[RMDB]
RNA sequence: GGGAACGACUCGAGUAGAGUCGAAAAGAUCAAAGGACAUCUGCGUCUUGAACAAAGUUCACUCUACGCACCGUCAUUAUAUCCAUUAUACGGAGCUAUAGAGAGACGUUGACUUUGUGUAAGAUAACGGACUGAUAGGGUUCGCCCUAUCAGUCCGAAAAGAAACAACAACAACAAC
Reactivity to DMS in 0.01 (KOAc 150mM, MgCl2 10mM, bicine 150mM(pH8.5), 24C), signal-to-noise 2, nucleotides 027 to 126: g040a110u030c040a050a080a000g030g010a000c090a150u000c050u040g000c170g000u000c000u020u010g030a020a010c010a060a050a050g000u010u010c120a230c020u000c040u000a130c300g000c040a200c000c000g000u000c190a100u000u010a000u040a140u080c270c170a150u010u000a030u000a000c000g000g020a060g110c000u000a250u030a220g000a000g000a010g000a150c210g000u020u030g000a010c000u020u000u000g010u000g000u000a020a000g000a070u000a110a200
Reactivity to 2A3 in 0.01 (KOAc 150mM, MgCl2 10mM, bicine 150mM(pH8.5), 24C), signal-to-noise 3, nucleotides 027 to 126: g140a030u070c030a010a050a050g090g040a040c020a060u030c080u110g020c000g000u000c000u050u120g010a000a000c050a070a080a000g020u010u050c010a000c020u000c000u030a010c020g000c050a070c000c000g030u010c110a000u010u230a040u040a070u090c150c080a040u100u070a020u030a050c000g000g020a050g000c010u070a060u200a220g010a000g040a020g120a060c100g050u030u150g010a020c010u010u020u010g060u000g010u050a000a050g010a070u050a130a060

This 177-nucleotide RNA was probed chemically with DMS and 2A3. 2A3 adducts were read by reverse transcription with SuperScript II with manganese. For DMS the reverse transcriptase was MarathonRT. Reactivities are given for positions 27 through 126. Source: RMDB library OK1LIB, as collected in RNAgym.